Chemical mapping of a 177-nucleotide RNA with DMS and 2A3. The 2A3 profile rests on 10,459 reads. Reactivities are given for positions 27 through 126. Conditions: 150 mM KOAc, 10 mM MgCl2 and 150 mM bicine (pH 8.5), 24 C. The data come from the RNA Mapping Database (RMDB), library M2PK50. 2A3 adducts were read by reverse transcription with SuperScript II with manganese.
[RMDB]
RNA sequence: GGGAACGACUCGAGUAGAGUCGAAAAGUCACUCAAUUCGUUGAGUGACAUACUGGGCCCGGAGUCGCGGAUGAAAGGGUCAAGACGCGCUCGAUAAAAUAACUAGUUGCCAGUUCGCUGGCAACAACCUUACAGUCUCAUUCGUGAGACUGUAAGGAAAAGAAACAACAACAACAAC
Reactivity to DMS in 0.01 (KOAc 150mM, MgCl2 10mM, bicine 150mM(pH8.5), 24C), signal-to-noise 4, nucleotides 027 to 126: g000u010c000a000c000u000c000a000a030u000u010c170g020u000u000g010a020g030u000g000a000c010a010u000a040c120u010g030g010g020c010c000c030g010g010a080g010u010c010g050c040g010g020a150u000g020a070a150a140g010g000g010u000c050a080a090g010a190c020g010c020g020c010u000c030g000a130u000a040a040a080a060u010a060a140c150u000a140g010u000u000g010c000c000a000g020u010u010c250g010c000u000g010g000c010a000a000c000a050a100
Reactivity to 2A3 in 0.01 (KOAc 150mM, MgCl2 10mM, bicine 150mM(pH8.5), 24C), signal-to-noise 6, nucleotides 027 to 126: g000u000c000a000c000u010c000a000a050u110u050c180g040u110u010g000a000g010u000g000a000c000a000u020a000c000u050g060g080g000c030c000c000g050g000a020g020u200c040g010c020g080g040a040u050g110a140a110a140g200g030g060u050c040a030a030g120a020c010g000c000g000c000u000c010g080a130u130a160a130a020a050u180a070a010c080u050a070g000u000u000g000c000c000a000g000u030u050c220g020c070u010g000g000c000a000a000c000a000a000